[RMDB]
RNA sequence: GGGAACGACUCGAGUAGAGUCGAAAAGCACAAUGGGAGGAAGCCUGAUGCAGCGACGCAGCGUGAGGGAUGAAGGCCUUCGGGUUGUAAACCUCUUUCAGCAGGGACGAAGCGUGAGUGCCGGUACAAUUAUAUAGAAAUUCGUUUCUAUAUAAUUAAAAGAAACAACAACAACAAC
Reactivity to DMS in 0.01 (KOAc 150mM, MgCl2 10mM, bicine 150mM(pH8.5), 24C), signal-to-noise 7, nucleotides 027 to 126: g000c050a060c100a100a080u020g010g010g010a070g000g010a090a080g010c030c030u000g000a100u020g000c060a090g010c040g000a110c090g020c060a050g000c080g000u020g000a040g000g010g000a030u060g010a250a300g000g000c000c010u000u030c120g010g000g020u010u000g010u000a020a300a210c000c010u000c010u010u010u010c080a080g010c040a070g000g000g010a050c040g000a080a020g000c030g000u000g000a100g010u010g010c020c020g000g000u010a060c110
Reactivity to 2A3 in 0.01 (KOAc 150mM, MgCl2 10mM, bicine 150mM(pH8.5), 24C), signal-to-noise 4, nucleotides 027 to 126: g050c020a010c020a060a070u110g020g000g010a030g010g030a060a010g020c000c000u040g030a060u100g000c030a040g020c010g070a040c040g000c060a020g010c020g110u080g010a010g030g020g000a030u300g010a050a000g020g010c000c000u020u030c130g070g000g000u010u050g000u000a000a000a000c000c000u000c000u030u050u040c020a020g000c010a010g030g020g020a010c010g030a040a000g020c020g020u040g020a030g010u020g000c010c000g010g000u030a010c020
Structure probing data (DMS and 2A3) for a 177-nucleotide construct. The 2A3 profile rests on 5,440 reads. Conditions: 150 mM KOAc, 10 mM MgCl2 and 150 mM bicine (pH 8.5), 24 C. The data come from the RNA Mapping Database (RMDB), library OK1LIB. Reactivities are given for positions 27 through 126. For DMS, 18,021 sequencing reads were counted.